[RMDB]
RNA sequence: GGGAACGACUCGAGUAGAGUCGAAAAAUUAAUAAGCUGUGUAAGUGCAGGCCGUCUGACACCGAUCGGCACAGGCACUCGGACUGAGGUCGUAUACACAGCUAACCAUAGAUGAUAAAAAUAAAAAGGAUUUUCUGACAUUCGUGUCAGGAAGUCCAAAAGAAACAACAACAACAAC
Reactivity to 2A3 in 0.01 (KOAc 150mM, MgCl2 10mM, bicine 150mM(pH8.5), 24C), signal-to-noise 4, nucleotides 027 to 126: a000u070u060a030a110u150a110a000g000c000u000g000u000g010u000a050a020g010u010g020c010a000g010g020c010c010g030u020c010u030g060a030c020a030c050c040g030a040u140c020g010g000c050a010c020a090g140g000c010a020c000u030c020g040g020a010c020u030g020a040g090g000u000c010g010u030a020u000a050c000a000c000a000g000c000u010a000a010c010c000a050u100a100g090a030u120g050a010u150a060a040a000a010a000u160a020a050a000a000a000
Reactivity to DMS in 0.01 (KOAc 150mM, MgCl2 10mM, bicine 150mM(pH8.5), 24C), signal-to-noise 5, nucleotides 027 to 126: a080u030u010a070a110u030a080a040g020c000u000g000u000g010u000a040a060g010u000g010c030a060g000g000c000c010g010u020c020u000g010a110c200a100c140c120g000a030u030c030g010g000c010a080c060a100g020g000c010a070c020u010c160g000g010a050c060u010g000a100g020g010u000c010g000u010a100u000a010c010a000c000a010g000c000u000a040a060c030c030a110u030a070g010a100u030g010a110u050a020a070a050a060a090u050a030a080a080a060a080
The record gives the reactivity of an RNA of 177 nucleotides to 2A3 and DMS. For DMS the reverse transcriptase was MarathonRT. For 2A3, 19,257 sequencing reads were counted. It was measured as part of the RMDB library OK1LIB. Conditions: 150 mM KOAc, 10 mM MgCl2 and 150 mM bicine (pH 8.5), 24 C.